[RMDB]
RNA sequence: GGGAACGACUCGAGUAGAGUCGAAAAACAUGCUGGCCAACCCAACCCCACGAUCCUCCAUCGGCAUGAUCAUGAUGUGUUCUCAAAUAUCAGGCCAGUGAAUCACCAUGCUCGUGCUGGUAAAGGCAACUUAUGCCCAAGUUCGCUUGGGCAUAAAAGGCGAGAAGUUAUUCGUAACUUCUCGCCUAAAAGAAACAACAACAACAAC
Reactivity to 2A3 in 0.01 (KOAc 150mM, MgCl2 10mM, bicine 150mM(pH8.5), 24C), signal-to-noise 2, nucleotides 027 to 156: a000c010a010u020g000c020u000g000g010c010c000a050a070c130c000c020a060a090c060c040c000c050a030c020g090a150u160c000c020u040c010c020a060u080c020g030g000c000a010u000g010a010u000c000a000u020g040a100u070g060u000g070u080u000c090u050c090a130a070a030u270a140u160c050a040g030g000c010c010a000g010u010g060a010a070u100c000a030c030c000a010u000g000c010u010c000g000u000g000c000u000g000g080u050a130a050a000g030g020c050a030a030c020u030u040a000u000g040c010c000c000a000a000g000u010u000c030g020c140u020u050g060g000g020c000a000u010a000a020a000